[RMDB]
RNA sequence: GGGAACGACUCGAGUAGAGUCGAAAAUGCAUAACCAUCAAUCGCAUUGUUGGGUGAAAGUUGGAGGAUAAAUCCUCACCAAGAUUUAAAUUAAGCAAGAGAUAUAAGGCCGCUCCUUAUAUUGCGAAGCCCAUAAUACGUUCGCGUAUUAUGGGCUAAAAGAAACAACAACAACAAC
Reactivity to 2A3 in 0.01 (KOAc 150mM, MgCl2 10mM, bicine 150mM(pH8.5), 24C), signal-to-noise 2, nucleotides 027 to 126: u050g000c010a030u070a160a000c020c000a030u040c000a000a070u020c030g030c060a060u070u110g050u010u070g020g060g050u160g110a100a090a020g040u130u070g110g010a000g000g000a020u110a050a090a070u020c000c010u040c000a040c020c020a030a000g070a190u080u120u120a020a130a170u060u190a100a010g110c040a020a020g010a040g020a170u000a000u000a050a000g010g000c110c030g060c080u270c030c010u010u000a010u000a020u000u050g040c000g020a040
Reactivity to DMS in 0.01 (KOAc 150mM, MgCl2 10mM, bicine 150mM(pH8.5), 24C), signal-to-noise 5, nucleotides 027 to 126: u020g000c030a090u020a070a110c040c020a140u020c030a060a090u010c160g010c030a300u000u000g000u010u000g000g000g000u000g000a080a070a110g000u000u000g000g020a050g010g000a090u010a050a070a090u010c010c010u010c040a140c080c070a090a060g000a090u010u010u000a060a090a110u010u010a110a100g020c040a080a080g010a170g010a070u000a000u010a000a020g000g020c180c200g020c240u030c010c000u000u000a010u000a010u000u000g000c060g000a080
Chemical mapping of a 177-nucleotide RNA with 2A3 and DMS.
Reactivities are given for positions 27 through 126.